Structure probing data (2A3 and DMS) for a 207-nucleotide construct. In probing experiments dimethyl sulfate is read out at A N1 and C N3, which are open when not base-paired. DMS adducts were read by reverse transcription with MarathonRT. The RNA was probed in 150 mM KOAc, 10 mM MgCl2 and 150 mM bicine (pH 8.5) at 24 C. For 2A3 the reverse transcriptase was SuperScript II with manganese.

RNA sequence: GGGAACGACUCGAGUAGAGUCGAAAACGUACGUGGAGACACGUACGACGAGACUUCGGUCUCGAAUCGCGCGAACUGGUGCCGCGCGCGCGCGAGGCGUCGGUGGUCGGCGAGCCCACGGACGCAAAAACUCGCGCGUAAAUAAGCAGCAUUAGAAAUCAUUAUAGGCAUUCGUGCCUAUAAUGAUAAAAGAAACAACAACAACAAC
Reactivity to 2A3 in 0.01 (KOAc 150mM, MgCl2 10mM, bicine 150mM(pH8.5), 24C), signal-to-noise 3, nucleotides 027 to 156: c010g000u000a000c000g000u000g000g020a050g010a030c000a000c010g000u010a000c000g000a020c000g000a010g000a000c000u080u170c300g080g000u010c000u000c000g000a040a070u110c030g000c000g000c000g010a180a110c020u010g020g000u010g010c000c000g000c010g000c010g000c000g000c000g000c000g020a000g000g020c020g000u000c090g160g020u000g010g010u020c020g020g130c190g040a040g010c000c000c000a000c010g070g000a010c000g000c000a040a040a020a090a150c000u000c000g000c010g000c000g010u010a000a010a000u170a030a010g060c090a000g000c010a010u000u040a020g030a040a120
Reactivity to DMS in 0.01 (KOAc 150mM, MgCl2 10mM, bicine 150mM(pH8.5), 24C), signal-to-noise 2, nucleotides 027 to 156: c030g060u020a000c000g060u000g010g010a300g000a300c000a040c020g010u000a000c000g010a110c000g010a300g000a030c020u000u010c060g030g060u000c000u000c000g010a030a040u000c020g060c020g040c040g030a130a100c020u000g020g000u000g040c000c000g020c010g070c090g020c040g010c030g050c030g000a020g020g000c010g000u000c010g030g060u000g000g030u000c020g000g040c160g000a270g000c170c010c000a020c000g020g050a020c000g000c160a070a040a010a120a260c010u000c000g030c000g010c010g050u010a030a030a170u000a100a100g000c030a030g000c030a050u000u010a090g020a140a210